RNA sequence: GGGAACGACUCGAGUAGAGUCGAAAACAGGCGCGUCUGCUGCACAGGAUGUUUGGGUGGACGCUGCGCCUUCCGCGCGCGGCAGCGUAUCUCGAAUAUUUUCCCGUUGGCGGGACCUUGGGCGCGGUCUACUCAGGGUGUUCGCGCCUUGGGUAGAAAAAGAAACAACAACAACAAC
Reactivity to 2A3 in 0.01 (KOAc 150mM, MgCl2 10mM, bicine 150mM(pH8.5), 24C), signal-to-noise 9, nucleotides 027 to 126: c040a020g060g000c000g000c000g030u010c010u050g010c010u040g020c040a030c020a060g090g020a100u090g080u060u100u090g100g000g000u090g130g080a030c000g000c050u040g000c030g030c010c000u200u110c040c040g040c010g020c010g010c010g090g030c010a010g010c010g020u030a070u030c040u010c010g030a050a010u060a050u100u050u040u050c000c000c010g020u060u100g050g030c000g000g000g030a000c000c010u010u070g020g010g000c010g000c010g010g010
Reactivity to DMS in 0.01 (KOAc 150mM, MgCl2 10mM, bicine 150mM(pH8.5), 24C), signal-to-noise 3, nucleotides 027 to 126: c110a080g010g000c040g000c020g010u010c030u000g000c030u000g010c020a030c300a300g000g000a300u070g010u000u000u020g000g000g000u000g000g000a140c060g000c030u060g000c020g000c020c040u010u030c040c050g010c070g000c040g010c020g020g020c040a040g000c060g010u010a070u010c020u000c040g010a070a050u030a070u020u010u000u010c050c000c010g020u020u020g010g010c050g000g000g000a060c230c040u020u020g010g000g010c000g020c010g000g000
Source information: An RNA of 177 nucleotides, treated with 2A3 and DMS and read out base by base. It was measured as part of the RMDB library OK1LIB. DMS adducts were read by reverse transcription with MarathonRT. The DMS profile rests on 11,919 reads.